[RMDB]
RNA sequence: GGGAACGACUCGAGUAGAGUCGAAAACUGGGGCUUAGGACCCCACUCCUGCGAGACAGGAGUAAUCCUAAACAGGGCUUUCACCCUUCCUUUAGUUUCCUUCCUCUCCUGGAGAGGUCUUCUGCCCGUAAUAUCUAUUCUUCGGAAUAGAUAUUACAAAAGAAACAACAACAACAAC
Reactivity to DMS in 0.01 (KOAc 150mM, MgCl2 10mM, bicine 150mM(pH8.5), 24C), signal-to-noise 4, nucleotides 027 to 126: c010u000g010g010g010g000c090u000u020a010g010g000a040c000c010c030c140a020c010u000c000c000u000g020c080g020a110g010a200c100a020g000g010a020g010u000a110a020u000c080c010u000a010a020a100c250a030g000g010g010c080u010u010u010c180a140c010c000c010u000u000c020c020u000u000u010a070g000u000u000u000c010c020u000u000c020c020u000c020u000c010c070u000g010g000a050g000a090g000g010u000c020u000u000c040u000g000c030c040c040
Reactivity to 2A3 in 0.01 (KOAc 150mM, MgCl2 10mM, bicine 150mM(pH8.5), 24C), signal-to-noise 5, nucleotides 027 to 126: c010u000g010g000g010g020c020u030u030a000g010g030a040c000c000c010c010a020c010u000c000c000u000g020c100g180a160g040a060c080a070g000g000a000g000u000a000a020u020c000c000u000a020a000a030c300a060g030g010g010c040u160u250u300c080a090c000c000c000u040u040c020c010u050u060u050a030g020u030u070u050c000c000u040u090c010c010u030c000u010c020c070u040g020g030a030g000a010g010g010u000c010u040u020c010u030g020c020c010c020

The data come from the RNA Mapping Database (RMDB), library VIROID. Structure probing data (DMS and 2A3) for a 177-nucleotide construct. The RNA was probed in 150 mM KOAc, 10 mM MgCl2 and 150 mM bicine (pH 8.5) at 24 C. Reactivities are given for positions 27 through 126.